[RMDB]
RNA sequence: GGGAACGACUCGAGUAGAGUCGAAAAUCAUGCUAUCACCAGCUAACUGGGUCUCCAACAGUUAGUGGUGAGCGAAAGUUCACCUAGUGUCAUUGUUGGAGACGAUGACGCUAUCGUGAUAGCAUGCCUAGACGAUUCUAUUCGUAGAAUCGUCUAGAAAAGAAACAACAACAACAAC
Reactivity to 2A3 in 0.01 (KOAc 150mM, MgCl2 10mM, bicine 150mM(pH8.5), 24C), signal-to-noise 5, nucleotides 027 to 126: u120c010a000u000g000c000u000a000u010c010a010c010c010a000g000c010u010a080a090c020u060g170g070g070u010c010u000c010c000a010a010c000a010g030u040u080a040g050u050g050g010u000g000a000g000c000g030a100a010a000g000u000u000c000a000c010c000u050a040g090u030g100u160c030a020u030u010g010u010u020g040g010a030g000a010c000g010a000u000g010a000c060g000c010u040a050u220c060g000u000g000a000u010a000g020c000a000u000g000c010
Reactivity to DMS in 0.01 (KOAc 150mM, MgCl2 10mM, bicine 150mM(pH8.5), 24C), signal-to-noise 6, nucleotides 027 to 126: u020c010a010u000g010c000u000a010u000c000a010c000c240a040g000c010u010a110a180c130u010g000g010g000u000c010u000c010c020a040a060c000a010g010u000u000a070g010u000g010g010u000g010a000g010c000g010a110a080a160g000u000u000c000a000c000c000u000a090g020u000g000u010c170a020u000u000g010u000u000g010g010a080g000a020c000g000a050u010g010a180c230g000c000u000a030u000c220g010u000g010a010u000a010g000c000a000u000g000c300
Source information:
Chemical mapping of a 177-nucleotide RNA with 2A3 and DMS. It was measured as part of the RMDB library OK2TRN. The RNA was probed in 150 mM KOAc, 10 mM MgCl2 and 150 mM bicine (pH 8.5) at 24 C.